This 177-nucleotide RNA was probed chemically with DMS and 2A3.
[RMDB]
RNA sequence: GGGAACGACUCGAGUAGAGUCGAAAACUAAGUUUACAAGGCGGCCUUCAGAAAGAAGGAUAAGGUAAUCGUUUUCGUCUUCUGAACGAUACACUUGGUGAACUUGUGGCUUAACUUCAACCCACUAUCAUGCGCAUAGUUUCGACUAUGCGCAUGAAAAAGAAACAACAACAACAAC
Reactivity to DMS in 0.01 (KOAc 150mM, MgCl2 10mM, bicine 150mM(pH8.5), 24C), signal-to-noise 2, nucleotides 027 to 126: c080u010a000a020g010u010u000u000a020c000a020a050g000g010c020g000g000c020c000u010u000c000a150g020a070a080a140g060a020a030g000g000a080u010a040a030g000g010u000a120a050u000c040g020u000u020u030u010c070g030u010c190u000u020c120u010g010a000a020c000g010a050u000a040c030a090c010u000u000g010g000u000g000a080a030c010u000u000g010u000g000g000c020u000u000a000a070c170u010u010c190a060a120c020c010c010a130c220u010a090
Reactivity to 2A3 in 0.01 (KOAc 150mM, MgCl2 10mM, bicine 150mM(pH8.5), 24C), signal-to-noise 3, nucleotides 027 to 126: c010u010a000a010g000u020u160u250a010c020a030a000g010g020c040g100g050c060c010u080u040c040a190g200a300a290a020g020a010a010g020g000a050u090a040a010g030g030u020a090a190u030c000g000u040u040u020u070c130g090u040c050u190u000c080u180g000a010a010c010g010a010u010a020c230a040c100u030u040g140g000u120g150a110a030c000u010u000g010u000g000g000c000u040u030a010a020c010u070u070c040a070a040c000c080c010a020c030u080a070
For DMS the reverse transcriptase was MarathonRT.